About this RNA
Chemical mapping of a 177-nucleotide RNA with 2A3 and DMS. Values cover nucleotides 27 to 126. For DMS the reverse transcriptase was MarathonRT. High 2A3 reactivity points to a flexible backbone, as in loops and unpaired stretches. The RNA was probed in 150 mM KOAc, 10 mM MgCl2 and 150 mM bicine (pH 8.5) at 24 C.

RNA sequence: GGGAACGACUCGAGUAGAGUCGAAAAGAGUGAAGCGGGAAGAGCUCAAGCUUAAAAUCUCCGUGCAAGUUUUGCGCGGCGAAUUGUAGUCUAUAGAGGCGUGAUCAGUGUGGGCGCUUGGGGCAAGACUUGAAAUACUAUUCGUAGUAUUUCAAGUAAAAGAAACAACAACAACAAC
Reactivity to 2A3 in 0.01 (KOAc 150mM, MgCl2 10mM, bicine 150mM(pH8.5), 24C), signal-to-noise 9, nucleotides 027 to 126: g080a010g040u100g040a080a010g020c030g010g020g020a060a040g030a030g040c010u020c050a040a020g000c010u080u120a030a060a060a120u030c010u000c000c000g000u000g000c020a090a230g050u130u230u260u060g000c000g000c000g000g000c000g010a020a020u030u070g050u060a040g020u000c030u040a110u040a150g080a030g050g020c040g030u060g030a070u080c040a040g050u030g000u060g110g020g000c040g000c020u020u060g020g000g000g000c050a070a020g020
Reactivity to DMS in 0.01 (KOAc 150mM, MgCl2 10mM, bicine 150mM(pH8.5), 24C), signal-to-noise 9, nucleotides 027 to 126: g010a090g010u010g010a100a100g010c080g010g000g010a090a080g010a140g010c030u000c050a080a080g000c030u010u010a070a050a070a090u000c010u000c000c000g020u000g000c000a020a120g020u010u020u020u010g010c000g010c000g000g000c070g000a020a080u010u010g010u010a050g010u010c050u010a120u020a120g010a080g010g010c060g020u010g000a100u010c090a090g010u020g010u010g000g010g010c090g000c060u010u000g000g000g000g010c120a080a080g010